[RMDB]
The data come from the RNA Mapping Database (RMDB), library RNAMAK.
Chemical mapping of a 207-nucleotide RNA with DMS and 2A3.
For DMS, 2,494 sequencing reads were counted.
RNA sequence: GGGAACGACUCGAGUAGAGUCGAAAAGUCGUUUCGACGACAAGGAGACCUUUGUGUACACUGAUGUAUAGGGAGAAGUGGGACUCCCAUUGGGAGUCCCUCCUUCGAAGAACUAUACGGAUGUGUACACUCUGGUAAGUGGUGACUUCGGUCACAACUAUUUUUGAUAGUUCGCUAUCAAAAAUAGAAAAGAAACAACAACAACAAC
Reactivity to DMS in 0.01 (KOAc 150mM, MgCl2 10mM, bicine 150mM(pH8.5), 24C), signal-to-noise 1, nucleotides 027 to 156: g010u000c010g050u000u000u010c110g000a130c010g010a070c050a090a150g000g010a170g000a040c000c000u010u000u000g020u000g010u000a010c010a030c000u000g000a300u010g010u010a030u000a020g010g030g010a220g000a010a060g040u000g030g010g020a140c010u020c000c000c000a040u000u010g140g080g000a100g000u000c000c020c000u010c180c000u000u000c010g010a100a120g010a180a290c000u000a010u000a010c000g000g000a090u000g010u000g000u010a010c000a000c000u000c040u000g000g050u010a030a110g000u010g010g000u000g000a050c010u030u000c300g030g010u000c010a010c000a000a120
Reactivity to 2A3 in 0.01 (KOAc 150mM, MgCl2 10mM, bicine 150mM(pH8.5), 24C), signal-to-noise 3, nucleotides 027 to 156: g010u000c020g000u020u050u160c180g100a060c020g010a010c050a070a080g230g030a150g050a030c000c000u000u000u010g000u000g010u000a000c000a000c000u020g010a010u070g020u030a010u000a010g000g010g000a050g000a000a010g010u000g000g000g010a000c000u010c000c060c090a160u150u300g010g000g000a000g010u000c030c000c000u020c010c010u010u000c000g060a080a020g010a020a010c000u000a000u000a000c000g030g000a000u000g000u000g010u000a000c000a000c000u000c010u000g000g000u040a080a110g190u150g160g000u000g010a000c000u040u070c300g110g000u000c000a000c000a020a020